[RMDB]
Description
An RNA of 177 nucleotides, treated with DMS and 2A3 and read out base by base. 2A3 adducts were read by reverse transcription with SuperScript II with manganese.
RNA sequence: GGGAACGACUCGAGUAGAGUCGAAAAGAUAUGGAGCGGUAUACCUUCGACGAUCUAUCCUCGGAAACGAGGAUAGGGAGAAGAUACACGCUCCUAAGUCAAAGCAACUAUCUUCGGAUAGUUGCAACAGUACUUCGUGGUUCGCCACGAAGUACUGAAAAGAAACAACAACAACAAC
Reactivity to DMS in 0.01 (KOAc 150mM, MgCl2 10mM, bicine 150mM(pH8.5), 24C), signal-to-noise 2, nucleotides 027 to 126: g040a010u020a060u010g010g000a020g070c000g040g000u000a030u000a250c300c090u000u000c000g010a060c300g020a010u000c010u000a000u000c010c000u000c000g000g000a000a010a030c010g000a020g010g000a010u000a000g010g000g020a020g020a020a020g000a110u000a020c050a150c030g030c010u010c000c000u000a010a000g000u000c020a200a130a160g000c000a000a020c000u000a000u010c000u000u010c240g010g000a010u000a000g010u000u010g000c020a040a060
Reactivity to 2A3 in 0.01 (KOAc 150mM, MgCl2 10mM, bicine 150mM(pH8.5), 24C), signal-to-noise 2, nucleotides 027 to 126: g000a000u000a000u050g010g000a010g010c000g000g000u020a040u050a170c100c030u020u000c020g300a300c000g000a060u010c000u010a000u000c010c020u000c000g010g000a000a000a000c010g000a010g010g000a010u000a000g000g000g010a000g000a010a000g020a000u010a000c300a070c200g010c000u000c000c000u010a000a000g010u010c020a030a200a020g000c000a000a010c000u010a000u000c000u080u160c300g140g000a000u010a020g020u000u000g000c000a000a000